[RMDB]
RNA sequence: GGGAACGACUCGAGUAGAGUCGAAAACUGAAGACGUUAAGUUAAACCCUUCAGAAGAUUUUAUAAAGCACGUCCGCACUAAUGGUGGUUACAAUUCUUGGCAUUUAGUCGAGGGUGAACUAUUGGUUAACGUCUGCCUUCGGGCAGACGAAAAGAAACAACAACAACAAC
Reactivity to DMS in 0.01 (KOAc 150mM, MgCl2 10mM, bicine 150mM(pH8.5), 24C), signal-to-noise 4, nucleotides 027 to 129: c000u040g010a070a000g060a060c260g050u000u070a050a140g040u090u100a050a050a120c030c010c070u040u000c060a130g040a210a030g000a050u060u040u000u060a120u040a050a040a210g040c030a060c060g000u010c020c060g000c060a000c050u000a050a100u160g040g000u030g070g000u020u060a150c230a050a050u000u000c040u000u070g040g130c050a150u040u050u040a120g020u000c040g060a040g000g050g020u000g140a020a080c060u020a070u010u020g000g050u070u000a030a090
Reactivity to 2A3 in 0.01 (KOAc 150mM, MgCl2 10mM, bicine 150mM(pH8.5), 24C), signal-to-noise 2, nucleotides 027 to 129: c000u010g020a000a040g070a060c060g060u110u080a040a050g000u030u170a040a060a020c000c000c000u040u080c000a020g020a070a030g000a090u000u050u050u060a240u090a010a140a010g010c020a000c090g020u000c000c000g020c000a090c040u010a000a070u010g050g000u000g020g000u030u040a030c070a040a050u000u020c000u000u000g000g000c010a090u090u160u220a090g030u000c000g030a000g000g010g020u040g020a040a000c030u050a020u040u000g010g040u060u070a100a000
An RNA of 170 nucleotides, treated with DMS and 2A3 and read out base by base. For DMS, 6,082 sequencing reads were counted. 2A3 adducts were read by reverse transcription with SuperScript II with manganese.